[RMDB]
RNA sequence: GGGAACGACUCGAGUAGAGUCGAAAAAGAAAUAGCGAUUCUCGAACGAGUUGAGUCCUUCGAGGAUUGCUAAGCAAAGAUGCAGAACUAUCAAUGAACGACUUUGCUCAUCUUUGUAUACAAAAAAGCAUACCUAAACGUUCGCGUUUAGGUAUGCAAAAGAAACAACAACAACAAC
Reactivity to 2A3 in 0.01 (KOAc 150mM, MgCl2 10mM, bicine 150mM(pH8.5), 24C), signal-to-noise 1, nucleotides 027 to 126: a000g120a000a070a050u030a000g010c000g000a020u010u000c010u010c000g000a020a000c010g020a020g070u110u140g230a110g160u030c000c000u000u000c000g000a000g000g020a000u020u020g010c000u000a060a010g030c000a000a000a000g000a010u030g030c060a020g020a080a050c050u080a070u180c050a070a160u260g080a110a050c050g040a050c090u110u100u100g020c010u060c020a030u000c000u010u050u030g060u040a120u030a040c050a000a200a010a000a060a000
Reactivity to DMS in 0.01 (KOAc 150mM, MgCl2 10mM, bicine 150mM(pH8.5), 24C), signal-to-noise 1, nucleotides 027 to 126: a090g000a070a130a130u000a000g000c010g000a000u000u000c000u000c000g000a050a020c210g010a110g000u000u000g040a220g050u000c010c080u000u000c000g010a010g000g010a010u000u000g000c010u000a000a150g000c020a010a000a000g000a050u010g000c200a030g020a020a110c080u040a070u040c020a130a150u030g010a150a190c170g000a020c120u000u000u000g000c000u000c010a020u010c010u000u000u000g010u010a120u000a070c140a000a040a030a030a000a070

The record gives the reactivity of an RNA of 177 nucleotides to 2A3 and DMS. Source: RMDB library M2PK90, as collected in RNAgym. Values are in units of 0.01, from 0 to 300, in steps of 10. For 2A3, 1,008 sequencing reads were counted. For 2A3 the reverse transcriptase was SuperScript II with manganese. The DMS profile rests on 709 reads. Values cover nucleotides 27 to 126. Conditions: 150 mM KOAc, 10 mM MgCl2 and 150 mM bicine (pH 8.5), 24 C.